[RMDB]
This 207-nucleotide RNA was probed chemically with 2A3. The reactions ran in a buffer of 150 mM KOAc, 10 mM MgCl2 and 150 mM bicine (pH 8.5), at 24 C. High 2A3 reactivity points to a flexible backbone, as in loops and unpaired stretches. Values cover nucleotides 27 to 156.
RNA sequence: GGGAACGACUCGAGUAGAGUCGAAAACUUCAAGUUUCUUUUAAAGAUUUACUACUUGAAGGGAUUGAUAGUGGUCGAAUUGAUAGAGUUUUACCAUUUGUGUGCAAAGUGCUUGAGAAAGCUUCUUCAUCUGUCAUAUUUAAACCUCCUAACCCUACUACCACGUAGGUUUCGACCUACGUGGUAGAAAAGAAACAACAACAACAAC
Reactivity to 2A3 in 0.01 (KOAc 150mM, MgCl2 10mM, bicine 150mM(pH8.5), 24C), signal-to-noise 2, nucleotides 027 to 156: c000u040u010c000a000a070g020u000u010u030c010u000u140u300u280a140a200a080g000a100u160u170u160a110c030u060a020c010u010u020g010a010a050g000g000g020a050u080u160g070a060u090a090g020u010g020g040u010c090g020a080a020u040u020g040a040u040a090g060a040g050u050u080u050u090a010c010c020a040u060u190u160g090u010g010u000g060c040a020a020a020g030u050g000c020u000u030g010a010g070a070a020a010g010c000u150u060c010u060u060c040a120u000c040u030g050u070c010a030u010a080u110u160u070a080a090a020c000c000u040c010c010u010a070a140c030c030c000u100a020